[RMDB]
RNA sequence: GGGAACGACUCGAGUAGAGUCGAAAAUGUUCAAAAUGCUGUUGAAACUUCUUCAUAUGUUUUGCUUGCUUUCUUCUUGGUGGGAGUGUUAUGUACCUUGGUUAUACUGGUAGCAAUGUGCUGUUGCAUAACAAACAGAUUUACCCCGGUGUAUGUAGUUUCUAAACUACUUCGGUAGUUUAGAAACAAAAGAAACAACAACAACAAC
Reactivity to 2A3 in 0.01 (KOAc 150mM, MgCl2 10mM, bicine 150mM(pH8.5), 24C), signal-to-noise 2, nucleotides 027 to 156: u020g000u140u160c020a030a000a090a090u090g020c000u020g000u100u040g130a070a060a080c050u050u040c010u090u040c060a040u150a020u210g050u020u080u000u030g080c050u020u020g030c000u070u030u040c020u090u040c010u010u090g040g000u010g010g050g000a060g020u040g020u100u030a100u110g010u030a010c030c000u010u050g000g000u060u040a050u030a110c010u040g090g000u020a040g060c000a020a050u040g020u040g030c050u010g060u140u040g000c010a000u080a080a040c010a050a030a030c060a000g020a080u060u050u100a070c030c020c010c040g130g000u030g010u030a070u040g090u050a070
Reactivity to DMS in 0.01 (KOAc 150mM, MgCl2 10mM, bicine 150mM(pH8.5), 24C), signal-to-noise 1, nucleotides 027 to 156: u000g030u010u000c080a170a090a210a100u000g010c020u010g000u000u000g020a110a040a070c300u000u000c000u000u010c110a170u000a090u000g000u000u000u010u010g010c110u000u000g040c050u000u000u010c040u000u000c070u000u000g030g040u010g010g030g010a120g000u000g010u000u040a080u000g050u000a030c030c040u010u000g000g030u000u000a100u000a070c030u020g000g000u000a070g030c040a080a090u000g030u000g000c000u000g000u000u000g020c020a100u000a100a100c040a070a040a170c040a120g000a190u000u010u000a100c040c030c010c050g000g040u000g030u000a060u000g010u000a210